Record summary
This 177-nucleotide RNA was probed chemically with 2A3 and DMS. High 2A3 reactivity points to a flexible backbone, as in loops and unpaired stretches.
RNA sequence: GGGAACGACUCGAGUAGAGUCGAAAACGAAGGCGGAUAUCAUGAAGAAACGUGUUACUGCCUUAGAAGAUGAACGUAAUAUUCAUGGUAUGCUAAAUCUAGAGCUUGAGUCAGGUAAAACAUUACAUCAUCCGACUAGGUUCGCCUAGUCGGAUGAAAAAGAAACAACAACAACAAC
Reactivity to 2A3 in 0.01 (KOAc 150mM, MgCl2 10mM, bicine 150mM(pH8.5), 24C), signal-to-noise 2, nucleotides 027 to 126: c030g070a100a000g050g000c060g070g070a000u000a000u010c000a010u020g000a010a020g040a030a070a000c010g030u020g050u130u180a050c020u080g060c000c040u010u060a070g050a150a000g030a070u130g080a040a010c000g000u020a090a150u030a240u070u050c020a020u010g010g000u000a000u020g030c020u060a080a040a000u000c020u020a070g030a020g160c040u020u050g040a000g050u030c050a030g110g000u080a080a080a020a060c070a100u130u180a040c030a090
Reactivity to DMS in 0.01 (KOAc 150mM, MgCl2 10mM, bicine 150mM(pH8.5), 24C), signal-to-noise 3, nucleotides 027 to 126: c160g020a100a100g010g030c080g060g030a080u000a000u000c010a010u000g010a020a050g000a110a100a010c020g000u010g020u010u000a130c090u000g010c110c200u000u020a130g020a040a130g010a120u000g020a070a020c000g000u020a010a130u010a080u000u000c000a000u000g010g010u000a000u010g010c050u000a050a140a090u000c090u000a090g000a140g000c020u000u000g020a040g000u000c060a080g020g000u000a050a030a090a090c150a110u030u010a070c090a070
The DMS profile rests on 1,615 reads. The RNA was probed in 150 mM KOAc, 10 mM MgCl2 and 150 mM bicine (pH 8.5) at 24 C. Source: RMDB library OK2TST, as collected in RNAgym.